[RMDB]
RNA sequence: GGGAACGACUCGAGUAGAGUCGAAAAUGCGGCACAGUUCGAUUUGGUGGUCCAGAUUCCAGACCUGAAACAAAAUGAGAUUCUCACGCGAAGCGUACGGAUUAAUAGUGUGCUGCUUAGAGCAGCUGUUGCCAUUCUCCGAAUAGGAGCCCUGGCAACUAAUACCAGGGUUCGCCCUGGUAUUAGUAAAAGAAACAACAACAACAAC
Reactivity to 2A3 in 0.01 (KOAc 150mM, MgCl2 10mM, bicine 150mM(pH8.5), 24C), signal-to-noise 5, nucleotides 027 to 156: u050g010c000g030g020c040a050c020a110g010u080u080c050g040a050u040u080u200g080g010u190g010g000u000c010c000a000g040a090u140u030c080c010a010g030a020c020c030u120g080a070a090a050c090a070a090a060a060u130g030a070g010a110u090u020c030u020c040a030c020g070c050g100a120a030g030c020g010u030a020c070g040g000a010u070u090a060a080u100a120g120u060g070u050g110c000u000g000c010u080u110a080g030a020g090c010a000g000c030u070g050u080u030g000c000c010a030u180u060c000u000c000c010g040a160a080u140a300g000g000a000g000c000c030c000u000g000g020c000a010
Reactivity to DMS in 0.01 (KOAc 150mM, MgCl2 10mM, bicine 150mM(pH8.5), 24C), signal-to-noise 5, nucleotides 027 to 156: u000g020c010g030g040c030a090c080a060g030u000u000c030g000a080u000u010u000g020g020u010g020g020u000c020c040a050g010a290u010u000c060c030a070g010a040c020c090u010g010a140a060a190c070a050a080a070a120u000g010a180g000a130u000u000c010u010c040a060c030g040c030g010a060a140g000c050g030u000a070c040g020g000a110u000u000a050a150u000a120g020u010g000u000g010c020u000g020c030u000u010a070g010a150g040c040a090g000c000u000g000u000u000g000c010c030a120u000u000c030u000c020c010g010a100a150u010a140g000g010a070g020c160c090c070u000g030g010c030a070